[RMDB]
The record gives the reactivity of an RNA of 177 nucleotides to DMS and 2A3. For 2A3, 1,156 sequencing reads were counted. The RNA was probed in 150 mM KOAc, 10 mM MgCl2 and 150 mM bicine (pH 8.5) at 24 C.
RNA sequence: GGGAACGACUCGAGUAGAGUCGAAAAUAACUGGCUGAAGCUUAUAGCUGGUGUUUGUUACAAAGUACCCAAGCUUUUCCUUUCCAACUUCGUGGCUUUGAAGAAUUAUAGGAAUUUUAUGAUGUGCCUCCUCUAAAAUAUUCGUAUUUUAGAGGAGAAAAGAAACAACAACAACAAC
Reactivity to DMS in 0.01 (KOAc 150mM, MgCl2 10mM, bicine 150mM(pH8.5), 24C), signal-to-noise 4, nucleotides 027 to 126: u000a070a040c020u010g010g020c010u000g010a130a100g010c090u020u010a120u010a030g020c020u000g010g020u010g010u000u000u000g000u000u010a100c120a080a110a150g010u000a090c030c020c040a110a210g000c120u000u010u000u000c010c010u000u000u010c110c080a110a110c060u000u010c020g010u000g010g000c090u000u000u000g000a030a070g000a110a080u000u000a100u010a090g000g000a040a040u010u020u020u010a060u030g000a100u010g000u000g000c110
Reactivity to 2A3 in 0.01 (KOAc 150mM, MgCl2 10mM, bicine 150mM(pH8.5), 24C), signal-to-noise 2, nucleotides 027 to 126: u030a000a040c000u000g000g000c000u050g070a150a010g030c080u220u130a120u150a260g000c010u050g000g040u040g030u030u100u090g080u040u050a100c060a030a160a020g000u060a080c050c040c000a090a050g060c000u040u040u070u090c000c000u020u080u040c020c030a020a080c040u050u030c030g120u070g120g000c040u250u070u250g000a000a040g020a040a040u170u070a040u200a140g020g060a050a040u060u050u050u110a110u210g070a070u060g020u070g210c000

It was measured as part of the RMDB library OK2TRN. Reactivities are rounded to 0.1 and cut off at 0 and 3.